[RMDB]
RNA sequence: GGGAACGACUCGAGUAGAGUCGAAAACACCUGGAUCCAGAGUGACUAUAGUAGGUGCACCAUUGCGCGACUCUUGUAUAUAGGGAUCCGUCUCGGAAUCGAUCCACGGAUCCGGAUCCCAAGGACACAACACAAGACUAUUCGUAGUCUUGUGUUGAAAAGAAACAACAACAACAAC
Reactivity to DMS in 0.01 (KOAc 150mM, MgCl2 10mM, bicine 150mM(pH8.5), 24C), signal-to-noise 9, nucleotides 027 to 126: c070a080c030c010u000g020g010a030u000c020c020a130g010a150g010u000g000a140c040u000a040u000a050g010u000a030g010g010u000g010c040a220c050c070a110u010u000g010c090g020c050g000a090c070u000c030u000u000g000u000a110u000a070u010a090g000g000g010a010u000c000c000g010u000c120u000c080g010g010a070a160u010c110g000a080u000c040c180a050c060g010g000a010u000c040c000g000g010a040u000c000c010c020a060a050g000g000a120c180a190
Reactivity to 2A3 in 0.01 (KOAc 150mM, MgCl2 10mM, bicine 150mM(pH8.5), 24C), signal-to-noise 8, nucleotides 027 to 126: c030a020c000c010u010g030g020a020u000c010c010a040g040a040g230u090g050a060c030u030a040u040a140g130u040a030g020g080u030g010c020a030c030c040a090u080u290g040c110g010c030g080a060c010u010c000u090u040g070u050a130u010a020u070a120g030g000g010a010u010c010c000g020u040c130u050c040g080g090a160a180u220c070g050a080u040c070c010a010c020g010g000a010u000c020c000g000g000a010u000c010c000c000a010a010g070g020a020c030a000